[RMDB]
RNA sequence: GGGAACGACUCGAGUAGAGUCGAAAAGGUGACGCCGACGCAUUGCUCGUAGGACAGUCCGGCAGUGGUCUGCUCCAGCAGCAAUUCGAGAAUGUAGUCACGCCGCUCGCCGCGGCGGGUGAUCGGCUCCUGGUCAGGUAUUCGUACCUGACCAGGAAAAAGAAACAACAACAACAAC
Reactivity to DMS in 0.01 (KOAc 150mM, MgCl2 10mM, bicine 150mM(pH8.5), 24C), signal-to-noise 2, nucleotides 027 to 126: g030g020u000g000a050c020g000c000c000g000a120c070g010c080a040u000u000g030c030u000c120g060u030a210g020g030a000c000a020g000u000c000c010g080g050c200a050g030u100g020g000u000c010u000g000c160u000c000c000a300g030c100a030g020c060a000a030u000u000c020g000a120g000a080a160u040g000u010a110g060u000c000a020c020g040c010c030g000c100u020c160g010c040c040g000c020g010g000c070g020g000g020u000g000a030u000c000g000g000c000
Reactivity to 2A3 in 0.01 (KOAc 150mM, MgCl2 10mM, bicine 150mM(pH8.5), 24C), signal-to-noise 3, nucleotides 027 to 126: g130g040u060g010a020c010g010c000c000g020a030c000g000c030a000u010u030g020c010u060c110g110u170a100g000g030a010c010a000g020u010c000c020g150g030c220a100g050u200g300g000u000c000u030g020c170u000c000c000a020g030c020a040g000c000a000a020u030u050c020g010a010g150a200a150u210g170u110a060g070u020c000a000c030g030c010c000g000c010u020c040g060c040c020g020c000g010g000c000g030g000g000u000g000a060u040c010g000g000c020
Structure probing data (DMS and 2A3) for a 177-nucleotide construct. Reactivities are given for positions 27 through 126. The data come from the RNA Mapping Database (RMDB), library OK1LIB. The DMS profile rests on 2,683 reads. The reactions ran in a buffer of 150 mM KOAc, 10 mM MgCl2 and 150 mM bicine (pH 8.5), at 24 C. DMS adducts were read by reverse transcription with MarathonRT.